The record gives the reactivity of an RNA of 177 nucleotides to 2A3 and DMS. For DMS, 1,925 sequencing reads were counted. The data come from the RNA Mapping Database (RMDB), library RFMREP.
[RMDB]
RNA sequence: GGGAACGACUCGAGUAGAGUCGAAAAUCACUUAUUUUUUUAAAGGUAAUUCACUAUGUCCGGUAAAAUGACUGGUAUCGUAAAAUGGUUCAACGCUGACAAAGGCUUCGGCUUCAUCACUCCUGACCGAUCUAUGAUAGUUCGCUAUCAUAGAUCGAAAAGAAACAACAACAACAAC
Reactivity to 2A3 in 0.01 (KOAc 150mM, MgCl2 10mM, bicine 150mM(pH8.5), 24C), signal-to-noise 3, nucleotides 027 to 126: u050c020a030c030u120u120a150u200u100u090u040u020u050u280a080a120a000g040g000u020a020a090u140u100c020a000c050u070a040u140g030u000c020c000g030g010u050a080a110a100a090u090g050a020c020u020g020g010u050a020u050c010g010u050a030a090a050a070u060g040g000u040u030c000a030a050c060g000c030u020g010a030c040a030a140a040g050g000c020u010u030c030g040g000c000u020u010c030a030u030c000a010c010u010c010c000u020g010a050c030
Reactivity to DMS in 0.01 (KOAc 150mM, MgCl2 10mM, bicine 150mM(pH8.5), 24C), signal-to-noise 2, nucleotides 027 to 126: u000c010a050c060u000u010a000u000u000u080u030u000u000u000a040a020a120g000g000u010a060a070u000u000c070a070c090u010a090u010g000u000c010c060g000g020u000a030a050a080a090u000g020a050c050u000g000g000u000a020u000c060g010u020a040a040a080a090u000g010g010u010u010c040a070a090c100g030c080u000g010a070c070a040a070a080g020g000c040u010u000c040g020g030c040u000u000c040a050u000c080a100c050u000c020c010u010g000a090c220
Conditions: 150 mM KOAc, 10 mM MgCl2 and 150 mM bicine (pH 8.5), 24 C.